Chemical mapping of a 177-nucleotide RNA with DMS and 2A3. For 2A3 the reverse transcriptase was SuperScript II with manganese. Conditions: 150 mM KOAc, 10 mM MgCl2 and 150 mM bicine (pH 8.5), 24 C. Source: RMDB library TTRDEL, as collected in RNAgym. For DMS, 9,317 sequencing reads were counted. For 2A3, 6,396 sequencing reads were counted.
RNA sequence: GGGAACGACUCGAGUAGAGUCGAAAAGAUAUGGAGCUGACCCAGCCGCCCAGCUUGGACCUCGGAAACGAGCUAGCUGUAACAAGCUGCAGCUCCUAAGUCAGGGGACGUAGUUCGCUACGUCCAAUCAUAUAAAAGGCUUCGGCCUUUUAUAUGAAAAAGAAACAACAACAACAAC
Reactivity to DMS in 0.01 (KOAc 150mM, MgCl2 10mM, bicine 150mM(pH8.5), 24C), signal-to-noise 7, nucleotides 027 to 126: g010a060u000a210u000g000g000a030g020c000u000g010a170c150c160c060a040g010c010c030g010c230c120c000a090g000c000u000u010g010g000a080c260c010u000c010g000g000a060a070a120c010g000a010g010c040u000a010g010c010u000g000u010a110a110c180a120a050g000c000u000g000c010a010g010c010u000c010c010u000a020a060g000u000c030a160g010g010g000g010a010c000g020u000a000g010u000u010c230g010c000u000a000c000g010u000c000c010a020a020
Reactivity to 2A3 in 0.01 (KOAc 150mM, MgCl2 10mM, bicine 150mM(pH8.5), 24C), signal-to-noise 3, nucleotides 027 to 126: g010a010u070a010u120g000g000a000g000c000u010g050a110c140c040c050a010g020c020c030g080c020c080c010a010g020c010u050u090g020g120a200c020c000u000c010g020g000a050a060a030c000g000a000g040c010u010a000g000c000u030g050u150a190a100c100a140a000g000c000u020g000c000a000g010c000u010c000c000u010a100a020g030u010c050a020g130g090g040g050a010c000g000u000a000g020u070u070c280g000c160u010a000c000g000u000c000c010a000a000